Conditions: 150 mM KOAc, 10 mM MgCl2 and 150 mM bicine (pH 8.5), 24 C. Chemical mapping of a 307-nucleotide RNA with 2A3 and DMS.

RNA sequence: GGGAACGACUCGAGUAGAGUCGAAAAACGUACCGGCAAAGAUGUGGUGAUUUCCGACGCGUUAACUUUUAUGGCGGGCGACCGUUCGCACGUUGAAGAAGCGUACCCGGGCGAUAUUUUGGGUCUGCAUAACCACGGCACCAUUCAGAUCGGCGAUACCUUCACUCAGGGCGAGAUGAUGAAGUUUACCGGUAUCCCGAACUUUGCGCCGGAACUGUUCCGUCGUAUUCGCCUGAAAGAUCCGCUCAAGCAGAAGCAGCUACUAAAGUGCCAGAUUCGUCUGGCACAAAAGAAACAACAACAACAAC
Reactivity to 2A3 in 0.01 (KOAc 150mM, MgCl2 10mM, bicine 150mM(pH8.5), 24C), signal-to-noise 3, nucleotides 027 to 266: a010c040g020u050a050c030c000g010g030c050a100a030a030g090a140u180g030u050g030g040u040g030a180u080u070u030c040c030g060a100c060g060c010g010u050u090a120a100c040u090u080u030u120a140u260g070g010c010g000g000g000c030g050a040c030c080g090u040u020c020g020c060a070c020g000u020u080g020a110a070g070a040a000g030c000g010u010a040c010c030c000g010g030g000c040g050a020u030a100u090u170u070u150g070g020g000u020c030u070g040c030a060u040a090a050c010c020a040c050g000g020c000a020c030c020a010u110u050c040a030g110a130u020c000g000g010c030g020a010u030a020c020c000u030u040c020a020c100u030c040a050g060g110g090c050g030a040g000a070u070g010a030u040g070a040a070g090u060u140u170a190c120c070g000g000u010a000u020c000c000c000g010a040a020c010u120u120u110g070c080g040c020c000g000g020a010a000c020u080g050u100u020c010c000g010u030c010g010u040a180u030u090c030g010c000c010u010g020a040a060a010g030a090u060c050c030g020c020u070c070a040a030g050c040a020g050a090a010g090c030a010g110c010u150a010c000u300a120a190a050
Reactivity to DMS in 0.01 (KOAc 150mM, MgCl2 10mM, bicine 150mM(pH8.5), 24C), signal-to-noise 3, nucleotides 027 to 266: a080c070g030u000a070c060c010g010g010c100a080a140a100g000a130u010g020u030g000g020u010g000a200u000u030u000c030c040g000a100c120g000c090g000u020u000a040a250c040u000u010u010u010a060u010g030g010c010g000g000g000c060g000a090c220c150g010u020u010c020g030c040a040c010g010u000u010g010a100a130g000a110a080g010c030g020u000a080c100c040c060g010g010g010c090g010a060u020a050u010u020u010u020g010g000g000u010c050u010g010c050a110u010a110a110c110c090a130c070g010g010c030a050c050c060a060u010u020c130a070g010a090u000c020g000g000c140g000a050u000a020c060c000u000u000c050a050c130u000c040a060g000g000g020c050g000a050g000a060u000g010a070u000g000a050a090g020u010u010u010a100c240c150g010g000u010a040u000c010c020c010g000a030a090c040u000u010u010g010c140g030c040c010g000g010a040a060c120u010g000u010u000c040c020g000u010c040g020u000a120u020u000c020g010c010c020u000g010a050a060a060g010a090u020c110c030g020c040u010c070a060a150g000c070a070g000a080a100g010c060a080g000c080u000a060c080u010a080a090a180
For 2A3, 3,802 sequencing reads were counted.
For 2A3 the reverse transcriptase was SuperScript II with manganese.
The data come from the RNA Mapping Database (RMDB), library POS240.
For DMS, 9,858 sequencing reads were counted.